[RMDB]
RNA sequence: GGGAACGACUCGAGUAGAGUCGAAAAUUAAUUAUGUAGUCUCGCUUUUGGACCAGAACAAUCACCAUCCUUUAUUAUCCUUGUGCUUGUGACAAUAUCAGUCUAAUGCACACGAGAAACGUAAAAGCUAAAGUGAAGAGUUCGCUCUUCACUUUAGAAAAGAAACAACAACAACAAC
Reactivity to DMS in 0.01 (KOAc 150mM, MgCl2 10mM, bicine 150mM(pH8.5), 24C), signal-to-noise 3, nucleotides 027 to 126: u010u000a080a130u010u010a070u000g010u000a120g000u000c030u000c060g010c140u000u000u000u010g020g000a080c040c040a060g030a070a070c060a060a090u000c060a060c060c060a090u010c020c040u000u010u000a070u020u000a170u000c020c010u000u000g010u000g010c010u000u010g010u000g010a040c010a080a140u000a080u010c240a060g000u000c010u000a070a040u010g020c010a020c020a020c150g000a100g010a030a010a050c150g000u000a050a040a110a080g010
Reactivity to 2A3 in 0.01 (KOAc 150mM, MgCl2 10mM, bicine 150mM(pH8.5), 24C), signal-to-noise 3, nucleotides 027 to 126: u060u030a030a050u030u090a040u110g040u060a050g040u030c010u000c010g050c060u020u000u090u140g040g010a020c020c010a020g030a080a020c020a020a070u070c030a010c050c010a050u060c020c010u090u170u080a100u140u080a060u110c000c030u030u020g000u010g000c010u070u060g090u020g080a020c030a090a070u110a130u300c060a040g000u000c000u020a030a040u080g000c000a000c010a000c030g050a040g020a190a070a010c030g010u060a030a030a030a030g000
An RNA of 177 nucleotides, treated with DMS and 2A3 and read out base by base.
For DMS the reverse transcriptase was MarathonRT.